[RMDB]
The data come from the RNA Mapping Database (RMDB), library RFMREP.
Structure probing data (DMS and 2A3) for a 177-nucleotide construct.
High 2A3 reactivity points to a flexible backbone, as in loops and unpaired stretches.
The reactions ran in a buffer of 150 mM KOAc, 10 mM MgCl2 and 150 mM bicine (pH 8.5), at 24 C.
RNA sequence: GGGAACGACUCGAGUAGAGUCGAAAAGUGCAUAUGAUGGAAAAGUUUUAAUCUCCUGACACUUGUGAUGUCUUCAAAGGAACCACUGAUGCACAAAGUCGUAUCUAUCGUUCGCGAUAGAUACGACGACAGUCCGCAAGUUCGCUUGCGGACUGUCAAAAGAAACAACAACAACAAC
Reactivity to DMS in 0.01 (KOAc 150mM, MgCl2 10mM, bicine 150mM(pH8.5), 24C), signal-to-noise 1, nucleotides 027 to 126: g000u000g010c000a020u010a280u010g030a090u020g010g000a050a060a120a120g020u000u000u040u000a070a150u000c120u010c020c020u020g000a020c020a020c050u020u010g030u040g010a110u000g000u020c030u000u010c160a080a150a040g000g010a080a230c010c010a010c010u000g000a060u000g040c000a000c000a070a110a290g030u000c000g010u000a000u000c000u000a000u000c000g020u000u020c270g010c040g010a000u000a020g000a000u000a000c000g000a000c000
Reactivity to 2A3 in 0.01 (KOAc 150mM, MgCl2 10mM, bicine 150mM(pH8.5), 24C), signal-to-noise 3, nucleotides 027 to 126: g010u010g020c010a010u050a070u170g100a090u040g080g010a020a080a010a140g080u110u140u160u210a100a080u130c060u000c050c010u000g020a020c020a020c010u170u160g100u170g190a300u020g030u060c000u200u140c110a150a160a040g020g000a020a020c000c000a010c030u070g040a020u000g000c020a010c020a030a080a000g000u000c010g000u000a000u000c000u000a000u000c000g030u010u050c300g000c010g050a000u000a000g000a010u010a000c000g000a000c010